Chemical mapping of a 177-nucleotide RNA with DMS and 2A3. Reactivities are given for positions 27 through 126.
[RMDB]
RNA sequence: GGGAACGACUCGAGUAGAGUCGAAAAGAUAUGGAUCUGGAGUCCGUGUACUACCCACCGUUUAGCUAAGCUUUCGGAAACGAAAGCUUAGCUAAACGAGGUACGGACGCGAAACAGAUCCUAAGUCCAAUGUUAACAAGUUCGCUUGUUAACAUUGAAAAGAAACAACAACAACAAC
Reactivity to DMS in 0.01 (KOAc 150mM, MgCl2 10mM, bicine 150mM(pH8.5), 24C), signal-to-noise 8, nucleotides 027 to 126: g010a120u000a300u010g000g010a010u000c000u000g010g010a270g010u000c040c000g020u000g020u000a100c160u010a070c020c000c030a300c150c000g000u000u000u000a010g010c000u000a010a010g010c000u000u000u000c000g010g010a120a100a230c000g000a010a010a010g010c000u010u000a000g010c000u000a000a000a000c000g000a020g000g000u000a020c110g010g010a010c010g030c100g010a100a100a160c000a010g000a010u000c000c000u000a040a110g000u010c070
Reactivity to 2A3 in 0.01 (KOAc 150mM, MgCl2 10mM, bicine 150mM(pH8.5), 24C), signal-to-noise 5, nucleotides 027 to 126: g090a040u180a110u300g010g000a010u000c010u020g050g050a150g140u040c050c040g030u090g060u110a220c080u060a070c010c010c040a070c050c000g010u000u000u000a000g000c000u010a010a000g000c000u010u000u020c030g110g080a240a150a150c020g000a010a000a000g000c000u000u000a000g010c000u000a000a000a000c000g010a000g000g000u010a000c000g010g030a020c020g000c020g120a180a160a030c000a000g000a010u010c000c000u030a270a020g020u010c030
The 2A3 profile rests on 19,538 reads. For 2A3 the reverse transcriptase was SuperScript II with manganese. The RNA was probed in 150 mM KOAc, 10 mM MgCl2 and 150 mM bicine (pH 8.5) at 24 C. Values are in units of 0.01, from 0 to 300, in steps of 10. For DMS the reverse transcriptase was MarathonRT.